[RMDB]
RNA sequence: GGGAACGACUCGAGUAGAGUCGAAAAUAAGAAUAGAGCUCGCACUGUUGCAGGCGUGUCCAUACUUAGCACAAUGACUAAUCGCCAGUACCAUCAGAAAAUGCUUAAGUCCAUGGCUGCAACUCGUGAUCUAUAUGAGGUUCGCCUCAUAUAGAUCAAAAGAAACAACAACAACAAC
Reactivity to 2A3 in 0.01 (KOAc 150mM, MgCl2 10mM, bicine 150mM(pH8.5), 24C), signal-to-noise 3, nucleotides 027 to 126: u090a010a010g080a040a080u100a090g080a020g070c020u030c070g030c030a050c130u040g020u030u030g020c010a010g020g030c010g020u030g010u000c040c010a030u070a110c020u020u040a010g030c030a010c020a070a150u050g040a020c020u070a080a100u090c040g030c060c000a000g000u020a060c030c000a020u040c000a010g110a060a100a010a040u050g010c010u080u080a020a010g010u000c040c010a010u030g030g050c010u010g000c010a010a010c000u010c090g070u030
Reactivity to DMS in 0.01 (KOAc 150mM, MgCl2 10mM, bicine 150mM(pH8.5), 24C), signal-to-noise 2, nucleotides 027 to 126: u040a100a100g000a080a090u010a110g010a100g000c070u000c040g000c180a120c130u000g000u010u000g010c020a030g000g020c030g020u000g000u000c100c080a140u000a080c020u000u000a050g040c000a040c150a040a110u000g010a030c070u020a110a110u000c080g000c010c020a020g010u000a060c120c050a110u010c050a040g000a110a040a100a090u010g000c020u000u020a040a050g000u000c270c030a050u010g010g020c000u000g000c050a050a030c030u010c170g010u000